[RMDB]
Notes
Structure probing data (DMS and 2A3) for a 170-nucleotide construct. Values cover nucleotides 27 to 129. 2A3 adducts were read by reverse transcription with SuperScript II with manganese. Reactivities are rounded to 0.1 and cut off at 0 and 3. The reactions ran in a buffer of 150 mM KOAc, 10 mM MgCl2 and 150 mM bicine (pH 8.5), at 24 C.
RNA sequence: GGGAACGACUCGAGUAGAGUCGAAAAAAAGGUGUCACCCUUGACAAGUUGCGUGAUUAUUUAGCUGACUAUGACGUAGCAGUCACUGCCGGCCCAUUCAUGGAUAAUGCUAUUAAUGUUGGUGGUAAUGCUGCAGCGUUCGCGCUGCAGAAAAGAAACAACAACAACAAC
Reactivity to DMS in 0.01 (KOAc 150mM, MgCl2 10mM, bicine 150mM(pH8.5), 24C), signal-to-noise 2, nucleotides 027 to 129: a080a100a020g000g020u030g020u020c080a060c060c000c010u060u000g060a130c110a060a040g010u040u030g000c090g040u010g010a120u020u020a200u000u000u000a000g000c060u020g040a020c070u040a080u000g010a020c080g030u010a110g040c030a000g020u030c060a000c090u050g040c000c010g030g050c070c010c080a060u000u060c200a120u030g050g000a030u000a050a020u020g030c050u000a000u050u090a040a120u050g020u030u030g020g000u000g020g030u010a020a060u010g030
Reactivity to 2A3 in 0.01 (KOAc 150mM, MgCl2 10mM, bicine 150mM(pH8.5), 24C), signal-to-noise 2, nucleotides 027 to 129: a000a000a000g080g010u150g000u100c000a050c010c000c000u000u000g030a040c000a010a010g190u180u050g080c000g000u010g170a110u010u150a190u040u100u190a030g090c120u010g000a030c090u160a000u170g010a010c000g070u000a000g000c000a000g000u070c010a000c000u030g040c020c000g050g050c000c000c040a030u020u020c030a000u020g000g000a020u000a170a050u300g020c000u010a000u110u020a020a040u080g000u020u120g020g020u000g000g010u000a080a000u060g010

DMS adducts were read by reverse transcription with MarathonRT. The DMS profile rests on 9,998 reads.